Overview
Conditions: 150 mM KOAc, 10 mM MgCl2 and 150 mM bicine (pH 8.5), 24 C. Chemical mapping of a 177-nucleotide RNA with 2A3 and DMS. For DMS, 968 sequencing reads were counted. For 2A3, 791 sequencing reads were counted. It was measured as part of the RMDB library RFM100.

[RMDB]
RNA sequence: GGGAACGACUCGAGUAGAGUCGAAAAGGCUGCUUGAUGCGGCCAAUUGCUGACAGAAAAGCUACCUUAGGGAUAACAGAGUCGUCACCCGCAAGAGCACAUAUCGACCGGGUGGCUUGCUACCUCGUGACUCGAGGUUUUUCGAAACCUCGAGUCAAAAAGAAACAACAACAACAAC
Reactivity to 2A3 in 0.01 (KOAc 150mM, MgCl2 10mM, bicine 150mM(pH8.5), 24C), signal-to-noise 2, nucleotides 027 to 126: g010g010c000u000g000c000u110u240g090a120u300g050c040g000g010c000c000a000a000u130u030g020c030u030g000a110c060a090g110a060a060a070a000g000c030u040a020c010c000u020u050a000g000g130g000a100u010a040a070c000a120g070a010g080u020c000g000u030c010a170c020c000c010g000c040a040a000g000a020g010c170a020c060a240u130a060u060c030g010a020c060c070g010g000g000u020g010g000c000u000u000g020c020u050a090c000c020u080c040g030
Reactivity to DMS in 0.01 (KOAc 150mM, MgCl2 10mM, bicine 150mM(pH8.5), 24C), signal-to-noise 1, nucleotides 027 to 126: g000g010c000u000g000c000u000u000g000a150u000g000c010g000g070c010c160a050a010u080u000g000c000u000g000a240c130a050g000a300a000a090a110g050c000u000a060c040c140u000u000a000g000g010g040a040u000a020a050c110a170g010a000g000u000c180g000u000c040a040c000c000c000g000c140a020a090g000a130g000c080a240c150a090u070a010u050c020g010a300c300c010g000g020g090u000g000g000c070u030u000g010c020u000a020c070c000u040c040g010